The record gives the reactivity of an RNA of 207 nucleotides to 2A3. It was measured as part of the RMDB library ARCHII. Conditions: 150 mM KOAc, 10 mM MgCl2 and 150 mM bicine (pH 8.5), 24 C.
[RMDB]
RNA sequence: GGGAACGACUCGAGUAGAGUCGAAAAGGAUUGAGUCAGGCAGUUCCAAAAGAGAUUUACUGACUCGCUUGGUCUAGGUUUGAGUUAUGUAUCGAGUUCAAGUUAAAGUUAAAGCAAGACAUAACCUAUGGUUGUAGACGAAUAAGUUAGCAGGUGUCUCAGGAUAUUACUUCGGUAAUAUCCUGAGAAAAGAAACAACAACAACAAC
Reactivity to 2A3 in 0.01 (KOAc 150mM, MgCl2 10mM, bicine 150mM(pH8.5), 24C), signal-to-noise 2, nucleotides 027 to 156: g050g010a090u160u150g000a030g040u000c020a020g040g140c060a030g050u090u030c040c050a080a020a200a060g080a030g050a030u170u190u120a030c000u020g010a010c020u030c010g000c020u000u000g000g020u000c020u010a070g010g080u070u020u110g100a090g080u050u080a020u030g060u000a060u050c010g020a030g050u010u080c070a030a020g020u020u060a120a110a010g020u050u200a110a050a050g110c020a040a040g030a040c020a050u040a000a000c000c020u080a080u100g090g000u030u050g020u020a040g020a070c020g000a080a070u160a140a060g050u080u080a070g040c090a050g050g070u110g080u030